[RMDB]
RNA sequence: GGGAACGACUCGAGUAGAGUCGAAAAUUAGGGCUCGGUAUCACAGUCGCCACACUGGGGGUAUGAGCUCAGGGCGAUAUUGUUGGGAUUUACUUAGAAGUGCAAUAUUCGCAUUCCAAAGUUCCUGAUAUCAUCGAUGAUUCGUCAUCGAUGAUAUAAAAGAAACAACAACAACAAC
Reactivity to DMS in 0.01 (KOAc 150mM, MgCl2 10mM, bicine 150mM(pH8.5), 24C), signal-to-noise 8, nucleotides 027 to 126: u010u010a150g010g000g010c000u000c010g040g060u000a010u000c010a050c020a030g010u000c210g010c180c210a040c190a270c000u000g010g010g020g020g000u000a010u000g000a020g000c000u000c010a090g000g000g010c020g000a020u000a020u000u000g010u000u000g010g010g010a220u010u010u010a080c120u010u000a110g010a100a130g010u000g010c000a020a030u000a040u010u010c030g010c010a130u010u000c020c040a080a090a180g000u000u000c010c010u000g000
Reactivity to 2A3 in 0.01 (KOAc 150mM, MgCl2 10mM, bicine 150mM(pH8.5), 24C), signal-to-noise 4, nucleotides 027 to 126: u130u050a160g000g000g000c020u010c060g060g010u000a010u020c010a000c000a000g030u040c060g120c220c010a050c010a010c020u030g010g060g220g000g000u040a020u050g020a000g000c000u000c000a020g030g060g000c000g000a010u010a010u030u050g070u070u120g040g010g080a190u170u140u120a100c060u080u100a080g080a280a040g170u050g060c010a010a000u020a040u100u210c020g000c020a050u120u020c020c010a100a060a040g010u030u000c010c000u030g020
The record gives the reactivity of an RNA of 177 nucleotides to DMS and 2A3. It was measured as part of the RMDB library OK2TRN. The reactions ran in a buffer of 150 mM KOAc, 10 mM MgCl2 and 150 mM bicine (pH 8.5), at 24 C. DMS adducts were read by reverse transcription with MarathonRT.